[RMDB]
Structure probing data (2A3) for a 207-nucleotide construct. It was measured as part of the RMDB library M2RFPK. The reactions ran in a buffer of 150 mM KOAc, 10 mM MgCl2 and 150 mM bicine (pH 8.5), at 24 C.
RNA sequence: GGGAACGACUCGAGUAGAGUCGAAAAUACCGCAGGCCUGCGGUGCGGCAGUGUGGAGACCUGCCGUAAGCCGUGUAGUUUUGACAACCGGGAGAAAGCGUAUGCGGAGGCAGCGCUUUCAGGGUCUAAAAGUAUGGGAUCUUCGGAUCCCAUACAACUCAUCUCACUGGUUCGCCAGUGAGAUGAGAAAAGAAACAACAACAACAAC
Reactivity to 2A3 in 0.01 (KOAc 150mM, MgCl2 10mM, bicine 150mM(pH8.5), 24C), signal-to-noise 3, nucleotides 027 to 156: u060a010c000c000g000c000a010g010g020c000c000u010g000c030g000g020u000g000c000g010g000c000a020g010u070g010u110g280g100a090g030a120c000c000u000g000c010c000g000u000a000a000g020c000c030g070u090g020u090a160g030u060u140u220u300g060a050c080a090a040c020c010g010g000g000a030g000a000a000a000g000c000g000u040a270u200g010c040g030g080a030g260g020c000a000g010c000g010c010u000u000u000c000a000g000g000g020u000c010u040a080a050a010a030g000u000a000u000g000g000g000a000u000c020u050u050c160g040g010a000u010c000c000c000a000u000a000c000a000a000